Source: RMDB library OK2TRN, as collected in RNAgym. An RNA of 177 nucleotides, treated with DMS and 2A3 and read out base by base.
[RMDB]
RNA sequence: GGGAACGACUCGAGUAGAGUCGAAAAGAAUACUCAGACAAAGCCCAGACUUUGGAGAGCGCCACAUUGCGUUAUUCCUUAAAUCCCAAUGGGUGAAGAAAAAAGAGAAAAUCGGCGCAGUCAACGACCUACCAUGCUGAUUCGUCAGCAUGGUAGGAAAAGAAACAACAACAACAAC
Reactivity to DMS in 0.01 (KOAc 150mM, MgCl2 10mM, bicine 150mM(pH8.5), 24C), signal-to-noise 2, nucleotides 027 to 126: g000a080a090u020a090c100u000c040a070g030a190c080a030a040a190g010c000c070c130a120g020a170c060u010u000u000g000g000a080g000a070g010c070g010c050c100a070c160a090u010u020g010c030g000u000u000a040u000u020c030c030u030u000a040a070a110u000c000c010c030a160a120u010g010g000g010u000g010a040a120g020a000a020a010a080a040a060g010a060g000a110a020a060a030u000c060g000g000c010g020c050a080g030u000c070a080a110c070g010a130
Reactivity to 2A3 in 0.01 (KOAc 150mM, MgCl2 10mM, bicine 150mM(pH8.5), 24C), signal-to-noise 1, nucleotides 027 to 126: g010a090a060u120a090c060u040c040a040g000a100c040a080a020a030g000c010c070c030a030g040a220c040u100u070u020g040g010a020g000a000g000c010g030c040c010a090c070a250u080u280g030c020g000u000u040a100u080u050c030c010u070u090a070a090a100u090c000c020c000a070a000u080g050g020g010u040g020a080a020g000a040a090a010a030a000a030g110a030g040a040a060a000a090u050c040g000g010c030g000c030a020g070u100c030a010a050c010g070a030
Annotation: The DMS profile rests on 1,067 reads.